[RMDB]
RNA sequence: GGGAACGACUCGAGUAGAGUCGAAAAAUCGCGAUCGCGAUAUAUGCAUAUAUAUCGUAGCAUAUUACGUAAUGCUAAUAUUAUAAUAUCGUAGCUAAUUAUAAUUAGCGCUACGGCCGAUGCAUCGUGUACUAAUCACGUUCGCGUGAUUAGUACAAAAAGAAACAACAACAACAAC
Reactivity to 2A3 in 0.01 (KOAc 150mM, MgCl2 10mM, bicine 150mM(pH8.5), 24C), signal-to-noise 3, nucleotides 027 to 126: a000u100c040g000c010g080a080u110c110g000c020g010a000u030a000u000a000u080g090c110a010u060a010u030a000u000a000u300c010g010u010a010g010c030a030u040a080u140u180a040c020g000u020a030a010u030g000c000u020a080a030u100a130u240u050a030u010a060a030u080a030u140c020g030u020a040g040c030u070a080a020u080u060a040u030a100a050u000u020a020g010c000g000c010u000a000c020g020g000c010c050g060a020u030g010c010a030u040c050g050
Reactivity to DMS in 0.01 (KOAc 150mM, MgCl2 10mM, bicine 150mM(pH8.5), 24C), signal-to-noise 3, nucleotides 027 to 126: a080u000c070g020c030g010a030u020c180g010c010g000a020u000a000u000a000u000g000c260a090u010a050u000a020u000a000u000c030g040u000a130g020c030a020u010a040u020u020a140c010g010u000a020a020u000g000c030u000a020a050u010a080u010u000a000u000a030a030u000a110u000c060g000u020a060g010c100u010a060a060u000u000a030u000a030a060u000u000a020g000c010g010c050u000a000c010g000g000c200c180g010a010u000g010c050a140u000c090g020